[RMDB]
RNA sequence: GGGAACGACUCGAGUAGAGUCGAAAAACUAAUCCAAAGCAAGUAUAGGAGAACAGGUUUUUUACUAUUUUUAGGCAGAUAAAAAAUAGUAUUUGACAGUCUAACACUAACUGAACAAUAAGUGUUAAAAAGUCGUCUCUGUUCGCAGAGACGACAAGUGCACAUUUAUGUUCGCAUAAAUGUGCACAAAAGAAACAACAACAACAAC
Reactivity to 2A3 in 0.01 (KOAc 150mM, MgCl2 10mM, bicine 150mM(pH8.5), 24C), signal-to-noise 2, nucleotides 027 to 156: a010c040u050a070a020u000c000c000a020a010a010g020c010a000a020g010u030a040u090a110g020g020a040g030a070a080c090a170g100g000u030u020u000u010u010u060a000c000u000a010u000u020u010u000u010a040g030g050c070a030g060a240u160a050a070a000a000a000a010u000a000g000u000a010u030u020u010g020a010c000a000g010u000c010u000a000a000c000a000c000u000a010a000c000u010g020a020a010c010a020a000u020a010a000g000u000g010u010u020a010a040a010a000a000g000u000c000g000u000c000u000c000u000g030u040u050c080g000c080a000g000a000g000a010c000g000a000c000a000a010